[RMDB]
RNA sequence: GGGAACGACUCGAGUAGAGUCGAAAAGAGCACGUUGCAGUUUCUAGCUUCUUCGGCGGUUUCUUGCUAGUUUCUUUCUGCUGGACCGUUCUUCCGCCGUUUCUUUCGGUCCUAUUCGUGCUCGAGAGGGAGGUUAGGCGUUCGCGCCUGGCCUCCCAAAAGAAACAACAACAACAAC
Reactivity to 2A3 in 0.01 (KOAc 150mM, MgCl2 10mM, bicine 150mM(pH8.5), 24C), signal-to-noise 7, nucleotides 027 to 126: g000a000g000c010a000c020g030u060u100g000c010a020g010u010u060u030c010u010a010g000c010u110u070c010u140u110c130g020g000c010g020g050u050u200u100c100u110u120g000c010u010a030g030u020u090u100c110u040u180u020c020u030g050c050u060g000g010a000c000c010g030u040u040c030u090u010c010c000g000c020c010g040u050u080u050c060u030u090u020c010g000g000u000c000c010u020a090u030u060c000g000u000g000c000u000c000g000a030g010a010
Reactivity to DMS in 0.01 (KOAc 150mM, MgCl2 10mM, bicine 150mM(pH8.5), 24C), signal-to-noise 2, nucleotides 027 to 126: g000a000g050c000a010c010g010u020u070g030c080a030g000u030u000u010c030u000a000g010c030u010u010c090u000u020c060g000g020c090g000g010u020u020u020c090u020u000g000c010u010a030g000u010u020u060c220u010u020u000c030u000g040c030u020g000g010a010c030c010g000u010u010c080u020u020c030c040g040c060c040g000u010u000u000c030u000u000u000c000g000g000u020c000c030u010a130u000u000c030g000u000g000c000u020c000g020a140g000a220